[RMDB]
RNA sequence: GGGAACGACUCGAGUAGAGUCGAAAACGGGCUCAGCGCAAAUGGGACUUAACGGAGAAACUCAAUAUUUUACACGCAUAUGAAGAGCUGAGAGAAUUGAAGAUGGACCACUUGUCUACACGAGCCACCACCUCUAUUCCUUCGGGAAUAGAGGUGGAAAAGAAACAACAACAACAAC
Reactivity to 2A3 in 0.01 (KOAc 150mM, MgCl2 10mM, bicine 150mM(pH8.5), 24C), signal-to-noise 4, nucleotides 027 to 126: c020g010g000g000c000u000c010a020g050c020g000c100a020a040a060u030g000g000g080a130c040u130u070a210a090c090g010g000a080g030a040a020a000c010u000c030a030a020u010a100u130u180u060u200a130c130a050c080g060c020a070u140a110u300g240a070a050g050a090g050c020u020g000a010g000a000g010a010a030u060u060g010a030a000g030a040u020g020g010a000c000c000a020c010u020u000g000u010c020u020a060c090a010c090g010a010g020c000c000a000
Reactivity to DMS in 0.01 (KOAc 150mM, MgCl2 10mM, bicine 150mM(pH8.5), 24C), signal-to-noise 1, nucleotides 027 to 126: c150g000g000g000c000u000c000a050g000c300g000c040a000a000a230u000g000g020g000a130c010u000u050a130a120c000g000g000a250g000a020a000a160c000u000c030a000a130u000a220u000u090u040u000a100c250a140c120g000c100a100u000a200u000g000a130a070g050a020g000c050u000g090a040g050a050g030a000a140u030u030g000a290a040g000a070u000g000g000a080c000c000a070c000u000u010g020u000c020u020a090c110a000c250g000a000g000c060c000a300
Overview:
Chemical mapping of a 177-nucleotide RNA with 2A3 and DMS. The reactions ran in a buffer of 150 mM KOAc, 10 mM MgCl2 and 150 mM bicine (pH 8.5), at 24 C. The 2A3 profile rests on 2,505 reads. Source: RMDB library OK1LIB, as collected in RNAgym. For 2A3 the reverse transcriptase was SuperScript II with manganese. For DMS, 1,106 sequencing reads were counted. For DMS the reverse transcriptase was MarathonRT.